[RMDB]
RNA sequence: GGGAACGACUCGAGUAGAGUCGAAAAGCUAUUGUCUUCCAUGGAAUAGGCAGUGAUGGCAUUUGUUUUAUUUUCCUGAGGUGGAGAAAAACAAGGAGACCAUAACACUGUUAUUCCAUGGAAGAUAAGCAACGGAUAAUUUCGAUUAUCCGUUGCUAAAAGAAACAACAACAACAAC
Reactivity to 2A3 in 0.01 (KOAc 150mM, MgCl2 10mM, bicine 150mM(pH8.5), 24C), signal-to-noise 5, nucleotides 027 to 126: g090c050u110a100u140u130g000u020c000u000u000c000c000a000u000g000g020a010a030u040a060g110g060c000a000g000u000g020a020u010g010g000c020a050u000u000u000g030u000u000u000u030a240u030u040u040u040c010c000u170g140a170g170g220u250g040g000a010g020a010a000a000a000a000c010a010a010g050g020a140g040a130c000c000a010u030a120a040c000a000c000u010g000u000u000a000u000u000c000c010a000u000g010g000a000a000g010a000u000a000
Reactivity to DMS in 0.01 (KOAc 150mM, MgCl2 10mM, bicine 150mM(pH8.5), 24C), signal-to-noise 1, nucleotides 027 to 126: g000c050u010a090u020u010g000u000c020u000u000c010c010a000u010g030g000a050a000u010a030g010g060c010a000g050u000g040a080u000g010g010c040a070u020u000u000g000u030u000u000u060a020u030u040u020u000c000c000u030g020a180g020g050u030g000g000a080g030a000a010a000a010a000c000a050a020g000g020a300g000a230c000c000a000u030a060a130c000a000c000u000g010u000u000a020u000u000c000c000a000u000g000g000a000a010g000a000u010a030
About this RNA:
The record gives the reactivity of an RNA of 177 nucleotides to 2A3 and DMS. The reactions ran in a buffer of 150 mM KOAc, 10 mM MgCl2 and 150 mM bicine (pH 8.5), at 24 C. It was measured as part of the RMDB libraries RFM100 and RFMREP. Reactivities are given for positions 27 through 126. 2A3 adducts were read by reverse transcription with SuperScript II with manganese.